[RMDB]
RNA sequence: GGGAACGACUCGAGUAGAGUCGAAAAGAUAUGGACCGAUUGUCAGCUGGAACUGUGGCGUUGAAAUGAGCUCGGAAACGAGCUCAUGGAGCCACUCAGUACAGCUUGGAUUUAUCGGUCCUAAGUCAAAACAUGUUGUACUUCGGUACAACAUGAACCGAUAUGCUGCGUUCGCGCAGCAUAUCGGAAAAGAAACAACAACAACAAC
Reactivity to 2A3 in 0.01 (KOAc 150mM, MgCl2 10mM, bicine 150mM(pH8.5), 24C), signal-to-noise 2, nucleotides 027 to 156: g020a020u090a030u120g000g000a000c000c000g000a000u010u000g010u010c020a010g000c000u010g000g020a030a010c000u020g000u020g020g010c010g070u180u050g010a010a000a000u000g000a000g000c000u000c000g000g050a060a070a050c000g000a010g010c020u000c000a000u000g010g000a010g020c000c010a000c000u000c000a000g000u000a000c000a000g000c000u000u070g020g010a000u080u190u240a020u020c000g010g010u000c000c000u000a000a000g010u000c040a000a010a100a100c000a000u000g000u000u000g000u000a000c030u040u070c300g050g000u010a000c000a000a000c000a000u000g010a020a060
Structure probing data (2A3) for a 207-nucleotide construct. Conditions: 150 mM KOAc, 10 mM MgCl2 and 150 mM bicine (pH 8.5), 24 C. Values cover nucleotides 27 to 156. The data come from the RNA Mapping Database (RMDB), library RNAMAK.